[RMDB]
RNA sequence: GGGAACGACUCGAGUAGAGUCGAAAAUAGAAGUCAGCAGGUGGGUAAGGCAAGCUAAUUUUACACAGAACCCUCAGGAGGAAAGUGGUGAUGUAAUAGCUUUUUAUCAUGCCCCAGGGGGAGCAGGCAGAACACAUGUUUUCGAACAUGUGUUCUGAAAAGAAACAACAACAACAAC
Reactivity to DMS in 0.01 (KOAc 150mM, MgCl2 10mM, bicine 150mM(pH8.5), 24C), signal-to-noise 4, nucleotides 027 to 126: u010a080g010a090a080g030u010c060a050g020c050a050g010g010u010g000g000g010u010a050a090g010g020c130a040a040g010c030u020a040a080u010u010u020u000a060c090a080c090a090g020a180a080c030c020c030u000c060a100g020g020a110g010g000a040a090a070g010u020g020g010u010g000a080u000g010u010a060a040u010a080g010c060u010u000u010u000u000a060u020c100a040u010g010c030c020c030c090a090g000g010g000g010g020a100g000c120a050g010g000
Reactivity to 2A3 in 0.01 (KOAc 150mM, MgCl2 10mM, bicine 150mM(pH8.5), 24C), signal-to-noise 2, nucleotides 027 to 126: u090a000g080a090a030g050u080c060a030g000c040a020g070g070u100g020g080g030u100a080a030g010g000c020a000a010g010c020u050a020a050u070u100u090u100a070c100a000c000a030g110a120a070c020c020c020u040c080a130g090g040a020g060g060a120a060a030g080u110g040g000u020g040a050u060g010u040a060a060u010a070g010c000u060u040u000u020u060a150u080c060a030u100g020c000c000c020c010a000g010g020g000g000g020a010g010c010a020g060g000